Background
An RNA of 177 nucleotides, treated with DMS and 2A3 and read out base by base. It was measured as part of the RMDB library OK2TRN. DMS adducts were read by reverse transcription with MarathonRT.
RNA sequence: GGGAACGACUCGAGUAGAGUCGAAAAGCUGCCUCUGACGUCCUUCUCCCCCGGAAACGGGGCCGAAGGGUGGUAAGGCGGGUCGCCUGGCGCUAGCACGGGUAUGCGUGGCGGUCGACCCUGGCCGCCAGUGCGGACUGUUCGCAGUCCGCACUGGAAAAGAAACAACAACAACAAC
Reactivity to DMS in 0.01 (KOAc 150mM, MgCl2 10mM, bicine 150mM(pH8.5), 24C), signal-to-noise 4, nucleotides 027 to 126: g020c020u000g010c000c000u000c100u000g010a150c080g010u000c000c000u000u000c000u000c300c000c000c000c000g010g010a050a080a180c010g000g010g010g040c050c050g000a010a020g010g010g010u000g010g000u000a090a030g010g010c020g030g020g000u000c060g000c010c010u000g020g020c030g010c080u000a150g020c040a110c090g000g010g010u010a040u000g020c070g000u000g000g030c020g010g000u000c010g020a120c040c020c030u000g010g010c020c030g020
Reactivity to 2A3 in 0.01 (KOAc 150mM, MgCl2 10mM, bicine 150mM(pH8.5), 24C), signal-to-noise 2, nucleotides 027 to 126: g030c030u050g050c020c020u080c200u270g110a040c010g010u010c010c000u000u000c010u060c000c010c000c020c000g000g000a040a010a000c010g000g010g010g000c010c000g000a000a000g010g000g000u000g020g020u080a030a010g010g000c020g000g000g000u020c010g000c000c020u040g080g010c000g000c060u070a060g110c100a080c170g150g000g050u170a080u170g000c060g030u030g050g070c030g000g000u070c020g050a080c000c020c030u010g080g030c000c000g000